Structure probing data (DMS and 2A3) for a 177-nucleotide construct. Values cover nucleotides 27 to 126. Source: RMDB library 15KREP, as collected in RNAgym. For DMS, 1,516 sequencing reads were counted.
RNA sequence: GGGAACGACUCGAGUAGAGUCGAAAAGUCAUGAAUAUGGAUGUUAGUCUCCAUAGACAUAGGCUCUCUCUUAAGGAGUUGAUGAUGUAUGCCGCUGAUCCAGCCAUGCACAUUGCCUCCUCUAACGGUAGAUCCUUAGGUUCGCCUAAGGAUCUACAAAAGAAACAACAACAACAAC
Reactivity to DMS in 0.01 (KOAc 150mM, MgCl2 10mM, bicine 150mM(pH8.5), 24C), signal-to-noise 2, nucleotides 027 to 126: g010u000c030a010u000g030a020a150u000a010u000g000g010a040u000g010u020u020a120g010u010c110u020c000c000a020u000a010g020a290c000a010u000a090g030g000c010u000c080u000c020u010c040u000u000a100a030g000g010a050g010u000u000g000a020u010g020a170u000g020u000a020u010g000c140c280g030c040u000g020a110u000c220c050a020g030c020c050a010u000g000c010a000c010a010u000u000g000c250c000u000c010c010u000c100u010a030a070c220g010
Reactivity to 2A3 in 0.01 (KOAc 150mM, MgCl2 10mM, bicine 150mM(pH8.5), 24C), signal-to-noise 2, nucleotides 027 to 126: g010u000c000a010u010g010a010a000u000a010u030g000g030a030u090g080u220u170a120g080u080c020u000c020c010a000u010a000g000a020c000a020u020a110g020g000c000u000c000u010c000u020c000u060u110a050a010g010g010a010g000u010u000g010a010u020g020a050u010g030u010a000u020g120c180c090g000c050u020g040a290u170c100c030a010g000c000c000a000u000g020c000a000c000a010u020u000g000c010c010u000c030c000u020c030u050a070a020c050g060